[RMDB]
RNA sequence: GGGAACGACUCGAGUAGAGUCGAAAAUCAGGGCAGAGCAGCAGCGGCUGGGCGCGCGGCUGGCACUGGUUGCCGGUGAGGGCAUGGCGGCGACCGCGCCUCUGCUGGCGGACAGCUGGCUUGCCGCCACCCACAGACAAUUCGUUGUCUGUGGGUGAAAAGAAACAACAACAACAAC
Reactivity to DMS in 0.01 (KOAc 150mM, MgCl2 10mM, bicine 150mM(pH8.5), 24C), signal-to-noise 3, nucleotides 027 to 126: u000c060a120g000g010g030c080a090g000a130g010c010a040g020c030a070g000c020g010g000c000u000g010g000g010c040g000c030g010c020g000g000c030u000g000g000c020a050c030u010g020g010u000u000g010c010c010g000g020u010g010a110g000g000g000c050a050u000g010g000c010g010g000c030g010a040c030c010g020c040g000c010c010u000c100u010g000c020u000g010g010c010g000g000a090c080a050g000c030u010g010g010c020u000u000g020c000c020g010c050
Reactivity to 2A3 in 0.01 (KOAc 150mM, MgCl2 10mM, bicine 150mM(pH8.5), 24C), signal-to-noise 4, nucleotides 027 to 126: u100c020a050g020g060g000c050a030g030a040g070c000a000g010c000a010g030c030g030g000c010u050g020g060g150c040g010c020g000c010g040g020c030u020g010g000c010a010c080u170g050g030u040u010g010c010c020g080g100u110g060a140g030g060g000c090a060u100g070g040c010g010g010c010g000a020c000c010g000c010g010c020c010u080c060u080g010c010u020g050g000c010g030g100a010c010a010g000c000u070g110g010c000u030u080g010c000c010g000c000

The data come from the RNA Mapping Database (RMDB), library OK2TRN. An RNA of 177 nucleotides, treated with DMS and 2A3 and read out base by base. For DMS, 8,921 sequencing reads were counted.